[RMDB]
This 177-nucleotide RNA was probed chemically with 2A3 and DMS. For DMS, 10,442 sequencing reads were counted. Source: RMDB library OK2TST, as collected in RNAgym. Conditions: 150 mM KOAc, 10 mM MgCl2 and 150 mM bicine (pH 8.5), 24 C. DMS adducts were read by reverse transcription with MarathonRT.
RNA sequence: GGGAACGACUCGAGUAGAGUCGAAAAUGGCAUAACGAGAGGAUACCGUGGGGCACCUCUCCGGAGAAAAUGUGGCUUCUGAGCGAUCCAAAAAGAGAAAAACUUUACACCGACCGGUAUCAACGUACUAAUUAUGAUUAUUCGUAAUCAUAAUUAGAAAAGAAACAACAACAACAAC
Reactivity to 2A3 in 0.01 (KOAc 150mM, MgCl2 10mM, bicine 150mM(pH8.5), 24C), signal-to-noise 4, nucleotides 027 to 126: u080g050g010c040a040u050a180a030c030g010a020g000a010g140g030a050u050a130c000c040g040u110g060g030g010g000c030a040c000c000u000c000u000c000c030g030g030a030g030a030a090a030a030u190g030u060g080g000c000u050u010c020u050g030a030g000c020g010a030u000c020c000a050a070a010a070a000g080a010g060a090a070a000a030a010c020u130u100u050a030c060a010c020c040g080a060c020c020g020g000u030a030u110c030a020a060c030g040u050a060
Reactivity to DMS in 0.01 (KOAc 150mM, MgCl2 10mM, bicine 150mM(pH8.5), 24C), signal-to-noise 8, nucleotides 027 to 126: u010g010g010c050a080u010a120a120c120g000a090g010a050g010g010a080u000a060c040c030g020u010g010g010g010g010c100a080c040c010u000c010u000c040c080g000g010a080g000a050a070a080a070u010g020u000g010g010c040u000u000c050u010g000a090g010c060g000a050u000c030c050a040a070a050a050a050g000a100g000a070a070a060a100a060c040u000u000u000a070c110a090c050c030g010a110c120c030g010g010u000a030u000c060a050a070c140g010u010a150